[RMDB]
RNA sequence: GGGAACGACUCGAGUAGAGUCGAAAACACCCCGUCCAUAGAUCGCCCCCGUAGUGUGUUUCGGCCGAUCUGGCUGGUUCCGUGUUGCCUCCGCCACAUCCGCAUCUCUUCCACCGGCUCUCCCGACGGAAAGAUUAUCGUUCGCGAUAAUCUUUCCAAAAGAAACAACAACAACAAC
Reactivity to DMS in 0.01 (KOAc 150mM, MgCl2 10mM, bicine 150mM(pH8.5), 24C), signal-to-noise 3, nucleotides 027 to 126: c170a160c040c010c010c040g000u010c040c020a120u020a060g020a070u000c060g000c010c020c020c030c040g030u020a060g000u000g000u000g010u000u010u000c020g000g020c080c030g010a090u010c080u010g000g010c020u010g020g000u010u020c040c040g010u020g010u020u000g000c000c000u010c040c030g000c030c040a080c070a070u000c010c020g000c070a050u030c040u010c040u010u000c040c010a090c110c040g000g010c050u000c070u000c010c000c010g000a140c200
Reactivity to 2A3 in 0.01 (KOAc 150mM, MgCl2 10mM, bicine 150mM(pH8.5), 24C), signal-to-noise 6, nucleotides 027 to 126: c070a070c010c010c000c000g040u030c020c000a080u040a090g060a070u060c030g030c000c010c010c010c000g060u050a080g030u050g010u010g030u070u040u060c030g010g000c030c010g040a100u030c030u050g030g000c020u020g060g000u090u020c030c020g020u030g060u070u070g020c000c010u020c020c020g010c020c000a040c010a050u030c020c000g020c020a060u020c020u000c000u070u030c010c010a030c010c030g040g000c010u010c010u010c010c020c010g040a060c060
Structure probing data (DMS and 2A3) for a 177-nucleotide construct. The reactions ran in a buffer of 150 mM KOAc, 10 mM MgCl2 and 150 mM bicine (pH 8.5), at 24 C. It was measured as part of the RMDB libraries RFM100 and RFMREP. Reactivities are rounded to 0.1 and cut off at 0 and 3. For 2A3, 7,766 sequencing reads were counted.